[RMDB]
Chemical mapping of a 177-nucleotide RNA with DMS and 2A3.
DMS adducts were read by reverse transcription with MarathonRT.
For 2A3 the reverse transcriptase was SuperScript II with manganese.
The RNA was probed in 150 mM KOAc, 10 mM MgCl2 and 150 mM bicine (pH 8.5) at 24 C.
It was measured as part of the RMDB library OK2TST.
Reactivities are given for positions 27 through 126.

RNA sequence: GGGAACGACUCGAGUAGAGUCGAAAAGAGUCCAUUUGUAUCGCGAAUCACAUUGAUUAUGAGAAAUGGAACAACCAUCAACGCAAGGAAUCCAAUGGGCCUGUAUUUCGUGUGAUGGGACAGUUCCUGGAUGUAUUCCCUUCGGGGAAUACAUCCAAAAAGAAACAACAACAACAAC
Reactivity to DMS in 0.01 (KOAc 150mM, MgCl2 10mM, bicine 150mM(pH8.5), 24C), signal-to-noise 2, nucleotides 027 to 126: g020a060g020u000c000c010a020u000u000u000g010u000a100u000c030g010c120g030a040a000u000c060a190c220a160u000u010g020a020u000u000a100u000g010a070g000a030a030a020u010g000g000a050a020c040a100a170c000c000a000u000c020a060a050c070g000c300a070a050g000g020a060a020u000c020c040a120a110u020g010g010g010c050c010u000g020u010a090u000u000u020c010g020u000g000u010g020a020u000g020g010g000a060c270a170g010u000u000c020c000
Reactivity to 2A3 in 0.01 (KOAc 150mM, MgCl2 10mM, bicine 150mM(pH8.5), 24C), signal-to-noise 2, nucleotides 027 to 126: g020a080g060u000c000c020a020u000u040u000g080u040a100u040c030g080c150g060a110a020u080c040a060c120a200u220u300g030a020u040u140a040u100g040a060g080a050a010a010u040g030g010a000a080c000a040a020c000c000a000u010c010a000a060c050g070c040a090a110g010g050a120a130u050c040c050a070a250u180g080g030g060c030c010u070g010u130a080u030u160u040c040g010u080g060u040g080a000u020g000g020g010a020c040a030g010u000u030c010c000